[RMDB]
RNA sequence: GGGAACGACUCGAGUAGAGUCGAAAAGAAGGCUUCGGCCUUCGGCAAUCCUAAGUCUCAGUGAGGACGAUGCUAGUGGUCAUCGGAAACGAUGAAACCACUUGGACCAUCGUCUCCCCACCACUGAGAUAUGGAGUAAAAAACCAUUCGUGGUUAAACCGGAUACCAUUUUCGAAUGGUAUCCGGUAAAAGAAACAACAACAACAAC
Reactivity to DMS in 0.01 (KOAc 150mM, MgCl2 10mM, bicine 150mM(pH8.5), 24C), signal-to-noise 1, nucleotides 027 to 156: g000a040a000g020g050c010u000u000c280g090g020c030c010u010u000c000g010g000c030a110a170u000c000c000u020a080a230g000u010c000u000c000a030g030u000g000a300g000g020a070c000g000a000u000g020c060u000a000g010u000g030g010u020c000a000u000c000g000g080a090a140a210c080g020a050u020g000a140a050a150c000c020a000c050u010u000g030g010a100c280c020a000u000c000g020u000c000u000c300c130c050c010a300c070c020a010c000u050g000a020g000a010u000a190u020g000g030a110g060u010a000a070a170a100a000a010c000c000a060u000u010c080g010u010g000g000u000u010a060a170
Reactivity to 2A3 in 0.01 (KOAc 150mM, MgCl2 10mM, bicine 150mM(pH8.5), 24C), signal-to-noise 2, nucleotides 027 to 156: g000a000a010g000g000c020u130u170c260g150g000c010c000u010u020c010g000g010c030a000a070u060c000c030u050a220a010g060u000c000u000c010a010g000u000g030a070g000g000a010c000g000a000u020g010c000u020a020g020u020g030g000u100c000a000u000c020g000g100a140a040a010c040g010a010u020g060a190a030a040c000c000a000c020u000u040g050g060a020c060c010a000u000c000g000u020c000u000c000c000c000c030a040c020c000a010c000u000g010a000g000a000u000a020u110g000g030a080g100u210a020a140a050a020a000a020c030c060a020u130u100c280g050u080g140g050u210u190a300a110
An RNA of 207 nucleotides, treated with DMS and 2A3 and read out base by base. Source: RMDB library RNAMAK, as collected in RNAgym. For DMS the reverse transcriptase was MarathonRT. The DMS profile rests on 1,428 reads. For 2A3, 1,179 sequencing reads were counted. In probing experiments dimethyl sulfate is read out at A N1 and C N3, which are open when not base-paired. The RNA was probed in 150 mM KOAc, 10 mM MgCl2 and 150 mM bicine (pH 8.5) at 24 C.